[RMDB]
RNA sequence: GGGAACGACUCGAGUAGAGUCGAAAAGAGCGCGCUGCGGAUGCAGCCCGCGAUCGCCUAUGACUUCACGCUGUUCGUCGCAUCGAUCGCGAUCGCGAUCGGCGCGUCGACGACCGCGCUGUGGAUAGGGCUAAUUUAUGUUCGCAUAAAUUAGCCCAAAAGAAACAACAACAACAAC
Reactivity to DMS in 0.01 (KOAc 150mM, MgCl2 10mM, bicine 150mM(pH8.5), 24C), signal-to-noise 2, nucleotides 027 to 126: g000a130g000c030g020c300g040c010u040g000c010g030g040a080u030g010c020a030g020c000c110c000g000c010g010a090u010c100g010c030c010u000a110u010g010a110c050u000u010c020a040c020g030c020u000g010u020u010c030g020u000c010g000c010a030u000c020g000a030u000c020g040c010g020a080u020c180g060c000g000a000u000c000g000g020c080g000c030g000u000c030g000a030c080g000a060c130c190g010c020g000c160u000g020u000g010g000a110u000a090
Reactivity to 2A3 in 0.01 (KOAc 150mM, MgCl2 10mM, bicine 150mM(pH8.5), 24C), signal-to-noise 3, nucleotides 027 to 126: g050a000g000c040g020c020g000c000u020g030c030g040g130a110u300g040c030a010g010c050c060c000g000c000g000a070u070c050g030c030c010u090a120u140g150a130c020u040u010c030a000c010g020c010u030g030u160u060c010g020u010c000g030c000a010u000c000g010a010u030c020g040c030g220a300u300c240g000c000g010a020u020c020g010g000c050g010c040g010u040c020g020a010c040g040a000c020c010g010c010g040c160u060g030u020g100g000a080u100a110
An RNA of 177 nucleotides, treated with DMS and 2A3 and read out base by base. 2A3 adducts were read by reverse transcription with SuperScript II with manganese. It was measured as part of the RMDB library OK2TST. For 2A3, 2,274 sequencing reads were counted. Conditions: 150 mM KOAc, 10 mM MgCl2 and 150 mM bicine (pH 8.5), 24 C.